[RMDB]
RNA sequence: GGGAACGACUCGAGUAGAGUCGAAAAAAAGAUAUGGAAGUCCCAGAGAUUUACCGACACGUUUGACGACAGAUCGGAAACGAUCUGUCCGAGUGUCGGGAUCGACGAAGGGACUUCCUAAGUCAAAUCUAGUAGUGGUGUUCGCACCACUACUAGAAAAAGAAACAACAACAACAAC
Reactivity to DMS in 0.01 (KOAc 150mM, MgCl2 10mM, bicine 150mM(pH8.5), 24C), signal-to-noise 2, nucleotides 027 to 126: a060a080a040g000a060u000a280u000g000g010a030a020g000u000c000c000c000a090g020a300g000a060u000u000u000a230c000c000g020a020c000a010c000g020u000u020u020g020a250c300g000a010c000a010g000a000u000c020g000g000a050a060a150c000g000a010u000c000u000g010u000c000c020g020a080g020u000g000u000c010g000g010g000a010u000c130g010a130c130g010a220a200g000g010g010a020c000u000u000c000c000u010a000a050g000u020c030a080a160a140
Reactivity to 2A3 in 0.01 (KOAc 150mM, MgCl2 10mM, bicine 150mM(pH8.5), 24C), signal-to-noise 1, nucleotides 027 to 126: a000a000a010g060a040u130a050u070g010g000a000a010g020u010c090c010c000a000g010a000g010a000u120u120u300a190c020c030g020a010c000a000c030g100u180u300u300g040a010c000g010a000c020a010g010a030u000c010g060g000a070a060a000c000g000a000u000c000u000g000u000c000c000g000a010g010u010g000u010c020g000g010g000a010u030c030g300a300c030g020a050a080g010g040g000a000c000u010u000c000c000u000a040a000g010u020c000a040a080a160